[RMDB]
RNA sequence: GGGAACGACUCGAGUAGAGUCGAAAACCUACUCAAUACGUCCUCGUCGUACAGAACGGUAACAUGUUUUCCGAACAUCCGCGCUUGGGUAUACGAGUACACACCUUACCCAACCCUCGCCAACGGGAGUGCAUCCACGAGUUCGCUCGUGGAUGAAAUCAGAGUAAACUUUCGAGUUUACUCUGAUAAAAGAAACAACAACAACAAC
Reactivity to DMS in 0.01 (KOAc 150mM, MgCl2 10mM, bicine 150mM(pH8.5), 24C), signal-to-noise 3, nucleotides 027 to 156: c030c000u010a080c030u000c040a090a140u000a050c030g030u000c010c000u000c010g010u000c070g010u000a130c060a110g040a070a140c060g020g000u000a070a110c100a120u000g000u000u000u000u000c030c020g000a090a110c040a110u000c020c010g010c030g000c050u000u000g020g010g030u000a040u000a090c040g010a090g020u000a080c080a110c100a080c070c020u000u000a060c030c000c010a090a070c020c010c030u000c100g000c040c040a100a070c050g010g000g000a090g020u000g010c000a040u000c000c000a000c000g000a040g030u000u010c300g030c010u000c010g030u000g000g000a000u000g000a010a080
Reactivity to 2A3 in 0.01 (KOAc 150mM, MgCl2 10mM, bicine 150mM(pH8.5), 24C), signal-to-noise 9, nucleotides 027 to 156: c010c000u030a040c040u060c060a070a110u070a120c040g050u020c010c020u030c020g040u020c020g010u080a060c040a120g090a170a030c030g030g030u110a070a040c050a140u120g040u040u050u070u050c030c030g020a060a020c020a070u040c030c020g040c010g010c090u050u040g040g000g030u040a060u020a070c080g020a040g120u190a010c060a010c010a020c030c030u060u110a050c010c000c020a020a040c030c000c000u040c040g060c040c020a040a050c030g030g010g010a050g030u070g020c010a000u000c000c000a000c000g000a000g010u060u040c190g080c080u000c000g000u000g000g000a000u000g000a000a010